[RMDB]
RNA sequence: GGGAACGACUCGAGUAGAGUCGAAAAACAUUUUUGGCCUCUUUAUUAAUAUAUCAUUUUAGCUAGAGCAAAAUGCAAUCACAGAGACACAAAUGUUCUUUGAUUCAUGAGUGCCCUCUGAAAAGUACCCAUCCCUAUGCUUCGGCAUAGGGAUGGGAAAAGAAACAACAACAACAAC
Reactivity to 2A3 in 0.01 (KOAc 150mM, MgCl2 10mM, bicine 150mM(pH8.5), 24C), signal-to-noise 1, nucleotides 027 to 126: a000c030a000u050u040u040u060u000g050g020c030c050u030c010u050u050u180a170u070u150a170a100u150a070u020a000u220c010a090u000u000u080u110a000g000c020u030a060g040a080g050c000a000a070a000a000u050g060c150a070a000u100c090a070c000a120g000a000g010a010c000a000c000a020a000a000u040g000u000u020c040u000u070u060g040a090u000u000c080a090u070g020a000g010u010g020c080c000c000u040c020u080g050a020a020a010a020g080u040a040

The record gives the reactivity of an RNA of 177 nucleotides to 2A3.
It was measured as part of the RMDB library OK1LIB.
The reactions ran in a buffer of 150 mM KOAc, 10 mM MgCl2 and 150 mM bicine (pH 8.5), at 24 C.